[RMDB]
RNA sequence: GGGAACGACUCGAGUAGAGUCGAAAAGCACGUCCGGGAAGGCCCGUGCGAACACUUGAGCUCCGGAUUGGCCGCUCUUGUGGAUUAGGACGUUCUAGCUCCGGCUUGGCCGCUAGUUCGUCCGAAAGGACGGAGUAAUCUUCGGAUUACUCCGUCCAAAAGAAACAACAACAACAAC
Reactivity to DMS in 0.01 (KOAc 150mM, MgCl2 10mM, bicine 150mM(pH8.5), 24C), signal-to-noise 5, nucleotides 027 to 126: g010c010a000c040g010u010c030c010g020g020g010a110a120g000g000c150c160c020g000u010g010c020g000a150a110c010a020c020u010u010g000a020g010c010u020c040c010g000g010a220u040u050g000g020c080c170g000c020u000c000u000u000g000u000g010g010a130u030u030a080g000g000a020c000g010u000u000c000u000a000g000c030u020c090c040g010g020c100u060u010g000g000c080c050g000c000u000a010g010u000u010c000g010u000c000c000g000a020a040a130
Reactivity to 2A3 in 0.01 (KOAc 150mM, MgCl2 10mM, bicine 150mM(pH8.5), 24C), signal-to-noise 9, nucleotides 027 to 126: g040c010a010c020g030u030c020c000g030g040g150a100a110g100g040c060c100c010g010u010g010c020g020a080a010c010a000c000u020u030g000a000g010c020u030c040c010g160g160a300u140u230g150g020c050c030g000c010u010c000u010u000g020u020g030g030a060u050u170a050g000g000a000c000g000u000u000c000u000a000g000c030u060c100c030g140g040c110u160u230g140g020c020c010g000c010u000a000g000u000u010c000g010u000c000c000g010a020a020a010